An RNA of 177 nucleotides, treated with 2A3 and DMS and read out base by base. Source: RMDB library OK1LIB, as collected in RNAgym. 2A3 adducts were read by reverse transcription with SuperScript II with manganese. Conditions: 150 mM KOAc, 10 mM MgCl2 and 150 mM bicine (pH 8.5), 24 C. For DMS, 6,851 sequencing reads were counted.
RNA sequence: GGGAACGACUCGAGUAGAGUCGAAAAUGAUAUGCAUCUCUGGGUGUUUUUGGGGUGUGGCGGACGCGGGGCGGUCAUUGGACGGGGUGCAGUUAAAUACAUGCCCGGGACCCAUGAAGCAUGCGCGGUACCACUGUAAGUUCGCUUACAGUGGUACAAAAGAAACAACAACAACAAC
Reactivity to 2A3 in 0.01 (KOAc 150mM, MgCl2 10mM, bicine 150mM(pH8.5), 24C), signal-to-noise 5, nucleotides 027 to 126: u160g040a010u040a050u220g030c040a050u020c030u000c070u110g090g050g020u050g090u040u150u040u130u190g070g010g010g010u080g040u050g090g020c060g040g030a060c030g020c020g060g030g000g030c050g010g000u040c020a060u030u110g040g020a030c020g010g020g000g020u040g010c000a010g000u030u060a010a110a000u140a050c040a010u080g130c010c000c010g030g020g020a060c000c000c000a030u130g020a030a010g020c070a010u100g040c040g010c040g050
Reactivity to DMS in 0.01 (KOAc 150mM, MgCl2 10mM, bicine 150mM(pH8.5), 24C), signal-to-noise 3, nucleotides 027 to 126: u050g000a130u020a010u030g030c030a100u000c030u000c050u030g000g000g030u000g010u000u010u010u010u000g010g010g010g030u020g000u000g010g000c120g030g000a090c100g000c060g010g000g010g000c070g010g000u010c040a070u020u000g040g010a120c080g000g020g000g020u010g000c110a050g000u000u040a030a060a080u050a100c020a100u010g020c010c050c020g020g010g000a070c010c000c030a030u030g010a070a070g020c040a020u010g010c060g000c140g000